The data come from the RNA Mapping Database (RMDB), library RFM100. This 177-nucleotide RNA was probed chemically with 2A3 and DMS. DMS adducts were read by reverse transcription with MarathonRT. The RNA was probed in 150 mM KOAc, 10 mM MgCl2 and 150 mM bicine (pH 8.5) at 24 C.

RNA sequence: GGGAACGACUCGAGUAGAGUCGAAAAUGAUCCAGUGGGAAGGUAUGUAAGUUUUCUUUGAAGUGACACAGGUUCGAUUCCGCGUCCUUGAGUUUCUGAGAUAAAAAGUUGCAGGCCAAGAUACUGAAGGGGAUCAUCAUUUCGAUGAUGAUCCCCUAAAAGAAACAACAACAACAAC
Reactivity to 2A3 in 0.01 (KOAc 150mM, MgCl2 10mM, bicine 150mM(pH8.5), 24C), signal-to-noise 1, nucleotides 027 to 126: u150g000a000u020c000c000a000g060u050g030g050g000a000a170g020g000u230a090u040g000u000a000a300g000u050u050u050u040c090u120u000u000g000a110a000g040u000g080a010c070a000c000a130g000g100u080u060c110g010a060u000u100c050c000g000c050g170u000c000c000u030u000g000a010g000u010u000u000c010u000g050a000g000a090u300a260a110a000a000a000g150u200u070g060c000a000g110g080c000c000a000a000g000a080u080a170c040u000g110a000
Reactivity to DMS in 0.01 (KOAc 150mM, MgCl2 10mM, bicine 150mM(pH8.5), 24C), signal-to-noise 1, nucleotides 027 to 126: u000g010a120u000c070c100a010g010u010g020g000g000a050a020g000g020u000a000u020g000u080a070a110g040u030u000u000u000c020u000u010u020g000a150a050g020u000g000a050c080a060c070a140g000g000u000u000c020g020a270u060u000c190c090g030c050g010u000c000c000u000u040g070a120g000u000u000u000c020u000g000a180g000a070u090a030a110a040a050a020g000u030u000g040c040a000g060g000c000c070a090a030g000a250u050a060c040u000g000a170